[RMDB]
This 177-nucleotide RNA was probed chemically with 2A3 and DMS. The data come from the RNA Mapping Database (RMDB), library OK2TST. For DMS the reverse transcriptase was MarathonRT. For DMS, 1,123 sequencing reads were counted.
RNA sequence: GGGAACGACUCGAGUAGAGUCGAAAACAAGGAUUAAGGGGUGCUCCACUAGGGUAUCGUGGCAGAAAGGGUGGCUGCGCGGAACCUGAGCUGGCCGCGAUGAAAAUUCACGAUCAGCGCCGUAGACGUACGCGUAAGGUUUCGACCUUACGCGUACAAAAGAAACAACAACAACAAC
Reactivity to 2A3 in 0.01 (KOAc 150mM, MgCl2 10mM, bicine 150mM(pH8.5), 24C), signal-to-noise 1, nucleotides 027 to 126: c010a040a080g160g000a080u120u060a080a080g070g050g020g010u060g060c050u030c010c010a040c060u050a030g050g000g100u080a040u080c030g000u110g010g060c020a010g080a130a050a010g060g000g030u010g050g000c000u000g000c020g060c010g020g000a010a020c040c020u050g000a050g060c030u000g050g000c050c020g000c030g010a030u030g000a000a020a000a110u170u040c020a030c060g020a010u030c000a010g000c030g010c040c010g020u020a080g040a110c140
Reactivity to DMS in 0.01 (KOAc 150mM, MgCl2 10mM, bicine 150mM(pH8.5), 24C), signal-to-noise 2, nucleotides 027 to 126: c090a140a180g010g020a060u000u010a140a110g010g040g000g000u020g000c100u000c000c020a060c150u010a140g000g020g030u010a060u020c060g000u010g010g000c040a040g020a060a080a130g000g020g000u000g020g030c020u000g000c060g010c030g000g000a120a050c040c040u010g000a230g000c010u000g010g030c000c010g040c020g010a040u000g000a040a040a170a130u010u020c030a040c020g030a050u010c010a000g000c040g000c050c080g010u000a070g000a110c100